[RMDB]
RNA sequence: GGGAACGACUCGAGUAGAGUCGAAAACUCUUCCUUUAGCUGCAAUAGCUCCAGGAGCAACUGUCAAGACUGCCUCUAGAAUUUCACUUGGUCUUGGAGGACAUCCAGGAAUGGCUGCAUCCACUGGGACCGGCUCAGGUUUCGACCUGAGCCGGUCAAAAGAAACAACAACAACAAC
Reactivity to 2A3 in 0.01 (KOAc 150mM, MgCl2 10mM, bicine 150mM(pH8.5), 24C), signal-to-noise 2, nucleotides 027 to 126: c060u090c040u070u030c000c000u030u150u020a010g000c000u000g040c120a240a210u130a270g000c000u030c000c000a040g000g040a020g000c000a080a100c040u140g020u150c010a020a020g070a050c000u030g040c020c000u090c050u120a180g100a160a070u120u050u160c100a130c140u170u140g070g020u060c030u000u010g000g000a000g020g030a020c010a050u050c030c000a020g010g050a150a110u050g020g000c000u070g010c000a060u000c000c000a040c040u010g000g060
The record gives the reactivity of an RNA of 177 nucleotides to 2A3. Reactivities are given for positions 27 through 126. It was measured as part of the RMDB library OK1LIB. 2A3 adducts were read by reverse transcription with SuperScript II with manganese.